[RMDB]
RNA sequence: GGGAACGACUCGAGUAGAGUCGAAAAUCACGCCAGUUCGCUGGCGUGAAAAGGUCAAGACAAAAGUCUAAAGCCAAAAGGGAAAUCCCAGACCAAUGGCAAAAAGCGGUACCUUCGGGUACCGCAACGUUGAAGAGGAGUUCGCUCCUCUUCAACGAAAAGAAACAACAACAACAAC
Reactivity to DMS in 0.01 (KOAc 150mM, MgCl2 10mM, bicine 150mM(pH8.5), 24C), signal-to-noise 1, nucleotides 027 to 126: u000c000a050c010g000c000c000a000g020u000u010c210g000c010u010g000g000c000g010u000g000a030a050a050a060g030g030u070c170a170a080g010a050c000a020a030a040a070g000u000c010u000a100a060a080g020c000c000a000a010a120a120g000g000g000a050a050a160u000c000c000c000a120g000a040c000c010a060a300u000g010g000c010a090a060a060a060a130g040c000g000g000u000a000c000c000u000u000c160g000g000g000u030a000c010c000g010c000a000a000
Reactivity to 2A3 in 0.01 (KOAc 150mM, MgCl2 10mM, bicine 150mM(pH8.5), 24C), signal-to-noise 2, nucleotides 027 to 126: u020c000a020c000g000c010c000a010g000u040u080c180g070c130u010g010g000c000g000u000g010a020a010a000a000g040g010u140c090a040a010g020a020c040a050a300a040a150g000u000c010u070a150a000a060g000c000c000a000a020a020a030g000g000g000a070a090a020u010c010c000c000a000g010a010c000c010a020a060u070g000g000c020a060a030a010a060a020g000c000g000g010u020a010c020c010u060u110c240g080g020g000u000a000c010c000g000c000a000a000
Structure probing data (DMS and 2A3) for a 177-nucleotide construct.
DMS adducts were read by reverse transcription with MarathonRT.
For 2A3 the reverse transcriptase was SuperScript II with manganese.
The reactions ran in a buffer of 150 mM KOAc, 10 mM MgCl2 and 150 mM bicine (pH 8.5), at 24 C.
It was measured as part of the RMDB library M2PK50.
The DMS profile rests on 873 reads.